[RMDB]
RNA sequence: GGGAACGACUCGAGUAGAGUCGAAAAGCGGCGACGCCGAAGGAGUGCCGCAGUAAGGACCCGUACGUUCCGCUGGGUACCAACCCGUGGUUUGGUGAUCCGAACCAGAUUCUCACCUGCCCGGCACGAUCGGUUCAUGGUUCGCCAUGAACCGAUCAAAAGAAACAACAACAACAAC
Reactivity to 2A3 in 0.01 (KOAc 150mM, MgCl2 10mM, bicine 150mM(pH8.5), 24C), signal-to-noise 2, nucleotides 027 to 126: g030c000g020g020c000g090a030c070g060c060c150g110a110a080g070g040a060g010u100g020c020c000g000c000a000g100u070a000a110g000g010a040c000c000c060g020u100a070c100g080u000u060c000c010g000c100u160g000g010g000u120a230c040c000a030a040c010c010c040g030u100g080g000u100u180u080g040g000u150g050a140u080c000c010g010a030a000c010c000a040g050a180u120u070c040u000c000a020c020c000u010g000c010c000c000g000g040c020a020c050
Structure probing data (2A3) for a 177-nucleotide construct. Conditions: 150 mM KOAc, 10 mM MgCl2 and 150 mM bicine (pH 8.5), 24 C. Reactivities are given for positions 27 through 126. It was measured as part of the RMDB library OK1LIB. For 2A3 the reverse transcriptase was SuperScript II with manganese.